[RMDB]
RNA sequence: GGGAACGACUCGAGUAGAGUCGAAAAGAUAGUGCCUUCCGACGAAGAUGUGGUGGACACAACAAAGAUAUAUUUCGGGAAAAGUAAGAUUUUUUUGUGGUAAGUUUUGUAUCGAAAAACUUACAGUGAAUUUGAGACUUUUUCUUUCACAAUGCAAAAGAGUUAUGGAUUUCGAUCCAUAACUCUUAAAAGAAACAACAACAACAAC
Reactivity to DMS in 0.01 (KOAc 150mM, MgCl2 10mM, bicine 150mM(pH8.5), 24C), signal-to-noise 2, nucleotides 027 to 156: g030a150u000a120g030u000g010c000c020u000u000c010c010g000a300c120g020a100a120g000a140u010g000u020g010g030u020g010g020a090c040a130c040a080a130c070a060a060a100g010a130u020a060u000a110u000u010u000c110g030g000g010a030a030a050a030g000u000a050a170g000a010u000u000u000u000u000u000u000g030u010g020g040u000a000a040g010u000u010u000u010g000u010a130u000c210g000a070a010a000a010a010c010u000u000a000c020a090g030u000g000a040a040u000u000u000g000a280g010a050c040u020u000u000u000u000c000u000u000u010c060a080c090a070a080u030g010c090a050a080
Reactivity to 2A3 in 0.01 (KOAc 150mM, MgCl2 10mM, bicine 150mM(pH8.5), 24C), signal-to-noise 2, nucleotides 027 to 156: g080a060u130a020g060u040g030c020c020u010u090c050c040g080a080c030g060a100a090g020a090u110g030u030g030g010u010g030g020a010c030a010c030a100a020c050a060a130a000g070a010u070a010u040a020u190u090u200c050g000g000g030a000a070a000a000g010u050a040a040g010a080u050u010u030u000u020u110u170g070u050g040g020u000a000a010g000u010u000u030u020g060u070a130u190c060g030a000a070a000a000a000c000u030u000a000c010a030g010u000g040a040a020u020u030u070g050a060g010a010c010u040u070u070u050u000c000u000u060u020c040a030c020a040a080u300g180c020a040a210